Source: RMDB library OK1LIB, as collected in RNAgym. An RNA of 177 nucleotides, treated with 2A3 and read out base by base. Reactivities are given for positions 27 through 126. The RNA was probed in 150 mM KOAc, 10 mM MgCl2 and 150 mM bicine (pH 8.5) at 24 C. For 2A3, 449 sequencing reads were counted. For 2A3 the reverse transcriptase was SuperScript II with manganese.
[RMDB]
RNA sequence: GGGAACGACUCGAGUAGAGUCGAAAAGGCCGCCAGCGCUCCGCCGGACGGGUUGACUUUCGUCUUGUCGGUGAGUCCGAUCGCCUCGGCGAUGAUCAGAUGCUGGUGGGUGAACGGGGCGUGGAUCGCUGCACGCGAGUUUCGACUCGCGUGCAGCAAAAGAAACAACAACAACAAC
Reactivity to 2A3 in 0.01 (KOAc 150mM, MgCl2 10mM, bicine 150mM(pH8.5), 24C), signal-to-noise 1, nucleotides 027 to 126: g090g040c060c000g020c000c000a000g000c010g010c000u000c000c000g090c010c070g000g020a000c000g000g190g010u060u150g190a100c070u090u140u010c000g000u000c000u100u170g100u060c010g030g020u040g080a000g020u020c020c010g110a070u040c000g010c040c040u110c080g030g000c040g000a060u080g020a050u140c050a090g030a040u100g000c010u000g020g040u020g040g000g000u020g030a020a000c030g000g000g040g000c090g020u260g100g000a020u110c030